[RMDB]
RNA sequence: GGGAACGACUCGAGUAGAGUCGAAAAUGUCUGGGUGUCGAGUUCGACGAGUCGGCAUCCUUUUUGAGGUUCUUCAGGGGCAAACCAGGUCUGUCCAGUUUUGAUGCGGAGAUCUUGAGAUGGAUCAGUGACGUAUUAGUUUCGACUAAUACGUCACAAAAGAAACAACAACAACAAC
Reactivity to 2A3 in 0.01 (KOAc 150mM, MgCl2 10mM, bicine 150mM(pH8.5), 24C), signal-to-noise 3, nucleotides 027 to 126: u160g030u060c070u080g020g040g000u050g000u010c030g000a060g080u120u170c070g170a160c070g040a100g130u030c020g020g030c000a010u000c000c000u020u050u010u020u040g080a050g000g000u040u010c020u060u060c030a000g010g000g000g060c030a070a010a070c000c000a000g070g040u000c050u050g040u000c000c000a030g000u030u050u160u150g040a040u140g040c070g060g020a050g000a050u000c000u040u070g100a160g010a080u080g060g010a030u030c070a030
Reactivity to DMS in 0.01 (KOAc 150mM, MgCl2 10mM, bicine 150mM(pH8.5), 24C), signal-to-noise 4, nucleotides 027 to 126: u010g020u000c080u010g000g020g010u010g010u000c010g000a070g000u000u010c080g020a100c170g000a090g000u010c010g020g000c030a010u000c000c010u000u000u010u010u000g010a110g020g020u000u000c030u000u010c060a120g010g000g010g010c080a030a060a100c060c050a100g010g010u000c060u000g000u000c020c040a070g010u000u000u010u010g010a070u000g000c090g000g020a080g000a020u000c020u000u000g000a130g010a100u000g000g000a030u000c050a140